[RMDB]
RNA sequence: GGGAACGACUCGAGUAGAGUCGAAAAGCGGCAACCGGGUCAAGCGCGAUCACGGUGCCGAGGUCAGCCCUUCUGGGGUGAUGCGGCACGCAAGGCCAUGCCUUGUGCAGCAACAUCAGCGCUCGUUCUCCGCCUAAAGUUUCGACUUUAGGCGGAGAAAAGAAACAACAACAACAAC
Reactivity to 2A3 in 0.01 (KOAc 150mM, MgCl2 10mM, bicine 150mM(pH8.5), 24C), signal-to-noise 2, nucleotides 027 to 126: g050c010g000g000c000a030a080c030c000g000g000g020u000c010a050a000g070c030g010c000g050a000u010c000a020c120g010g000u000g010c010c010g000a030g020g060u110c060a020g080c010c000c000u140u160c070u240g100g020g000g030u020g010a010u030g000c060g050g000c020a020c010g050c030a020a010g000g000c030c280a130u300g000c000c000u000u050g000u020g000c110a070g030c010a030a070c030a090u040c050a040g050c030g030c000u010c020g030u000u000